About this RNA
This 177-nucleotide RNA was probed chemically with DMS and 2A3. For DMS the reverse transcriptase was MarathonRT. Conditions: 150 mM KOAc, 10 mM MgCl2 and 150 mM bicine (pH 8.5), 24 C. DMS (dimethyl sulfate) methylates the pairing face of unpaired adenines and cytosines. Source: RMDB library TTRDEL, as collected in RNAgym.
RNA sequence: GGGAACGACUCGAGUAGAGUCGAAAAGAUAUGGACCCACCGCCCGGGAGCUUGUGGUGUCGGAAACGACACCUGAGCGAGGAUCGUAACAAGUGGGUCCUAAGUCAAACAGGUCUUCGGACCUGAAGACAUAACCUCUCUUCGGAGAGGUUAUGUCAAAAGAAACAACAACAACAAC
Reactivity to DMS in 0.01 (KOAc 150mM, MgCl2 10mM, bicine 150mM(pH8.5), 24C), signal-to-noise 3, nucleotides 027 to 126: g010a050u020a300u010g010g000a010c020c010c010a030c020c060g020c300c140c030g000g000g000a070g000c010u000u000g030u010g020g020u000g010u000c000g000g000a090a060a120c010g010a010c000a010c000c000u000g000a000g010c000g000a110g010g010a030u010c030g000u010a100a090c150a140a050g000u000g010g010g000u000c000c000u010a000a060g000u000c020a070a110a220c010a000g000g000u000c000u000u030c180g030g000a000c000c010u000g000a060a100
Reactivity to 2A3 in 0.01 (KOAc 150mM, MgCl2 10mM, bicine 150mM(pH8.5), 24C), signal-to-noise 2, nucleotides 027 to 126: g000a020u050a030u060g000g010a010c000c000c020a000c020c020g080c030c120c060g040g000g030a020g010c000u120u010g120u250g210g000u000g020u000c010g040g000a030a030a040c000g000a000c020a000c000c000u020g020a000g000c010g020a200g010g000a030u050c020g040u110a120a140c120a300a160g030u000g050g000g010u020c000c000u010a010a000g010u000c020a040a070a180c000a020g000g000u000c020u080u090c270g160g010a020c000c010u030g000a060a010